[RMDB]
RNA sequence: GGGAACGACUCGAGUAGAGUCGAAAACUUCGAUCACGAUGGCCGCCAUGGCCUCCACCACGGGCACGAUCCUGGGACAGAUGCACGCAUCGUGUCGGCCCUCGGUGAUGAUCUCGGUCUCGUUGCCAUGGGUGAGUGAGUUCGCUCACUCACCCAUAAAAGAAACAACAACAACAAC
Reactivity to 2A3 in 0.01 (KOAc 150mM, MgCl2 10mM, bicine 150mM(pH8.5), 24C), signal-to-noise 1, nucleotides 027 to 126: c040u070u010c050g030a030u060c020a010c190g090a090u100g000g000c010c050g120c080c100a130u090g110g000c020c000u020c000c000a030c020c020a050c030g040g000g050c110a070c300g080a130u100c040c010u160g000g000g130a020c060a080g030a100u100g000c100a050c200g000c010a060u030c120g130u040g050u080c030g010g000c000c000c000u000c030g040g080u020g030a030u050g030a030u000c000u010c010g000g040u020c010u030c090g010u010u040g170c000c000
Reactivity to DMS in 0.01 (KOAc 150mM, MgCl2 10mM, bicine 150mM(pH8.5), 24C), signal-to-noise 2, nucleotides 027 to 126: c150u000u000c060g010a070u000c020a110c170g010a050u010g010g010c010c040g040c170c140a060u000g000g020c000c000u000c050c030a080c030c030a050c250g010g000g030c010a140c040g000a100u000c070c040u010g030g020g000a170c160a140g000a070u000g030c020a110c210g000c040a000u020c060g020u000g010u000c010g000g010c030c000c020u000c300g000g020u020g000a090u020g000a020u000c010u010c050g000g000u000c100u000c050g000u000u000g000c000c030